[RMDB]
RNA sequence: GGGAACGACUCGAGUAGAGUCGAAAAGAAACAAAAACAGCAAUUGGACCAGAAAAUGCAAUUGCAUUAUAAGGCCGUAAUUGAACAGAUCGAGCGAGUUCAAAUUGACGUAACAUGAAACCUAUUAAGUGUCUGUGAAAUUCGUUUCACAGACACUAAAAGAAACAACAACAACAAC
Reactivity to 2A3 in 0.01 (KOAc 150mM, MgCl2 10mM, bicine 150mM(pH8.5), 24C), signal-to-noise 1, nucleotides 027 to 126: g020a000a000a000c000a000a000a030a000a030c030a000g170c000a000a010u120u050g010g040a140c000c000a000g170a080a280a000a000u020g040c010a030a300u150u150g000c010a010u020u060a080u080a070a050g040g000c020c000g060u020a000a110u040u000g000a000a000c010a010g080a060u140c080g020a130g120c080g050a020g020u070u020c010a030a020a050u080u010g010a020c070g050u040a070a010c000a100u060g060a060a100a020c010c020u120a050u220u120a140
Reactivity to DMS in 0.01 (KOAc 150mM, MgCl2 10mM, bicine 150mM(pH8.5), 24C), signal-to-noise 1, nucleotides 027 to 126: g000a230a070a020c080a000a000a040a080a170c090a160g000c030a050a000u000u000g020g000a070c020c010a000g040a170a100a100a020u000g020c030a300a060u000u000g000c000a030u050u000a000u020a250a100g000g000c010c000g010u000a070a100u010u000g010a100a040c050a050g010a010u000c050g040a060g000c050g000a130g050u000u000c090a020a090a090u010u000g000a030c090g020u000a030a090c170a120u030g000a120a060a120c010c030u000a050u010u000a010
An RNA of 177 nucleotides, treated with 2A3 and DMS and read out base by base. For DMS the reverse transcriptase was MarathonRT. For 2A3 the reverse transcriptase was SuperScript II with manganese. The DMS profile rests on 589 reads. Source: RMDB library OK2TRN, as collected in RNAgym. The RNA was probed in 150 mM KOAc, 10 mM MgCl2 and 150 mM bicine (pH 8.5) at 24 C.